RNA sequence: GGGAACGACUCGAGUAGAGUCGAAAACAUGCCUGUCCCGCCAGUUCAACGGUUGCCUUCUUGACCGCGCGGCGCACGAAAACGGGCAGCGCGUUCUUGUCUGCGGGGAGCGGUUGUUCUGCGGCGAUGGUGGUAGUGAUUUCGAUCACUACCACCAAAAAGAAACAACAACAACAAC
Reactivity to DMS in 0.01 (KOAc 150mM, MgCl2 10mM, bicine 150mM(pH8.5), 24C), signal-to-noise 1, nucleotides 027 to 126: c160a150u000g000c020c070u000g000u010c010c010c020g000c300c040a040g030u000u010c010a010a040c060g000g010u000u000g000c040c000u000u000c070u000u000g020a050c020c070g010c020g020c010g000g030c050g000c020a050c060g010a070a050a140a190c100g000g020g060c010a070g000c010g030c000g000u000u000c030u000u000g000u030c170u000g020c160g000g000g030g010a020g000c020g000g060u010u010g000u010u000c020u000g000c040g030g000c100g010a050
Reactivity to 2A3 in 0.01 (KOAc 150mM, MgCl2 10mM, bicine 150mM(pH8.5), 24C), signal-to-noise 1, nucleotides 027 to 126: c040a030u180g060c000c030u050g110u060c000c000c000g060c160c050a000g010u020u010c010a020a000c020g220g000u030u030g150c000c000u050u040c010u040u080g020a000c000c010g000c000g020c010g120g040c090g090c070a060c070g190a100a040a190a010c060g000g040g030c000a000g060c030g000c010g000u010u050c020u020u120g060u000c050u080g090c120g020g010g000g000a000g000c040g040g000u000u020g000u030u000c010u020g010c000g000g010c090g020a050
About this RNA: An RNA of 177 nucleotides, treated with DMS and 2A3 and read out base by base. High 2A3 reactivity points to a flexible backbone, as in loops and unpaired stretches. For DMS, 1,508 sequencing reads were counted.